[RMDB]
RNA sequence: GGGAACGACUCGAGUAGAGUCGAAAAGGCCUCUGACACGAGGCUGGCCGGGGAUGGCGCCCGAAGCUUUUCACCCAAGCCCAUGUGAAGCAACAAUCAAGGUAGUUGCAGUUUUAUAAAGAAGCCGUUUUCCGUCGUAGUUCGCUACGACGGAAAAAAAAGAAACAACAACAACAAC
Reactivity to 2A3 in 0.01 (KOAc 150mM, MgCl2 10mM, bicine 150mM(pH8.5), 24C), signal-to-noise 1, nucleotides 027 to 126: g000g000c000c000u020c000u010g260a060c000a020c300g020a010g000g000c000u000g090g000c000c000g020g000g000g000a030u100g000g110c050g030c000c000c000g010a020a000g000c030u110u040u090u140c140a160c000c000c000a050a000g070c000c000c000a000u210g130u030g030a220a000g000c000a030a000c030a050a150u180c020a110a020g130g010u020a010g030u210u000g000c000a000g000u070u160u080u110a110u050a070a070a130g160a020a000g090c020c000g000
Reactivity to DMS in 0.01 (KOAc 150mM, MgCl2 10mM, bicine 150mM(pH8.5), 24C), signal-to-noise 1, nucleotides 027 to 126: g000g070c010c000u000c010u010g000a000c300a100c250g000a000g000g000c000u000g040g000c080c010g000g000g020g060a150u050g000g020c100g020c000c020c000g030a100a110g000c000u000u060u000u000c060a250c020c120c060a080a210g010c050c020c000a180u050g000u000g000a120a020g000c090a070a040c000a120a020u040c130a010a120g020g000u000a040g010u020u000g000c020a080g010u000u000u050u000a130u000a160a160a140g020a070a000g000c000c000g000